Structure probing data (2A3 and DMS) for a 177-nucleotide construct.
It was measured as part of the RMDB library RFMREP.
The reactions ran in a buffer of 150 mM KOAc, 10 mM MgCl2 and 150 mM bicine (pH 8.5), at 24 C.
The 2A3 profile rests on 1,935 reads.
In probing experiments dimethyl sulfate is read out at A N1 and C N3, which are open when not base-paired.
DMS adducts were read by reverse transcription with MarathonRT.
RNA sequence: GGGAACGACUCGAGUAGAGUCGAAAAGUAAGCUUAUGGGCCGAAAGGGAAGCGGGUUAAAAUUCCUGCACCACUCUAAAGGAUAUUAGGGCAACCGAUCGUAAUCCGGGACAUCAAUUGGUGGUCGCUUAUCGCUAUUGUUCGCAAUAGCGAUAAGAAAAGAAACAACAACAACAAC
Reactivity to 2A3 in 0.01 (KOAc 150mM, MgCl2 10mM, bicine 150mM(pH8.5), 24C), signal-to-noise 2, nucleotides 027 to 126: g020u020a080a000g020c010u090u070a070u210g030g020g040c000c000g030a080a040a020g000g000g030a100a040g030c040g010g000g050u070u060a070a090a090a110u170u020c000c000u000g010c020a030c010c010a060c000u070c010u060a100a090a020g070g020a070u040a110u180u130a040g040g000g000c040a040a040c000c030g000a020u070c060g020u060a020a050u050c060c000g010g030g020a030c010a060u080c040a070a170u030u050g050g000u040g010g010u010c020g020
Reactivity to DMS in 0.01 (KOAc 150mM, MgCl2 10mM, bicine 150mM(pH8.5), 24C), signal-to-noise 4, nucleotides 027 to 126: g010u010a080a140g020c030u000u000a090u020g010g000g030c020c010g010a090a070a070g000g010g000a100a130g030c040g000g000g020u000u010a080a070a140a190u000u000c000c010u010g020c050a130c060c050a090c050u000c040u000a040a060a120g010g010a070u000a080u000u000a100g010g000g000c090a070a120c040c020g000a050u000c080g010u010a090a070u010c040c030g000g000g000a080c050a050u010c080a060a120u010u000g010g010u000g000g020u010c050g010